[RMDB]
RNA sequence: GGGAACGACUCGAGUAGAGUCGAAAACCAGUUCUGGUUGAGAUAUUUUGCCGCGACGGAAAAAACGUCCUGGCUGGCUUGCCUGAGCGCGCCGCAGCGCUUAAAAAUGCUCGCGGAACUGAUGCAGAAUUUCCGUGUGUUUCGACACACGGAAAUUAAAAGAAACAACAACAACAAC
Reactivity to 2A3 in 0.01 (KOAc 150mM, MgCl2 10mM, bicine 150mM(pH8.5), 24C), signal-to-noise 3, nucleotides 027 to 126: c010c000a000g000u000u000c030u100g240g000u210u300g040a010g000a040u060a080u110u030u030u050g000c010c010g000c030g000a000c000g070g000a070a010a000a010a000a000c010g000u000c000c000u020g000g010c000u010g010g000c050u090u140g030c000c000u020g000a010g000c010g000c000g070c030c140g100c070a030g000c020g000c000u000u030a020a010a020a000a000u080g000c000u010c030g010c010g000g030a000a000c010u040g020a050u170g050c060a030g090
Reactivity to DMS in 0.01 (KOAc 150mM, MgCl2 10mM, bicine 150mM(pH8.5), 24C), signal-to-noise 2, nucleotides 027 to 126: c050c010a080g000u000u000c020u000g000g030u030u020g010a040g000a110u050a010u000u000u020u000g020c000c010g020c300g000a020c020g050g010a000a080a080a090a060a140c010g000u000c010c030u010g000g000c020u000g000g000c020u030u000g000c000c000u000g000a000g010c020g030c050g030c190c120g020c120a090g000c040g000c040u000u000a000a020a040a040a090u010g010c000u000c050g010c000g000g000a010a020c000u020g020a080u030g020c180a100g000
Background
This 177-nucleotide RNA was probed chemically with 2A3 and DMS. Source: RMDB library RFM100, as collected in RNAgym. High 2A3 reactivity points to a flexible backbone, as in loops and unpaired stretches. For 2A3, 2,067 sequencing reads were counted.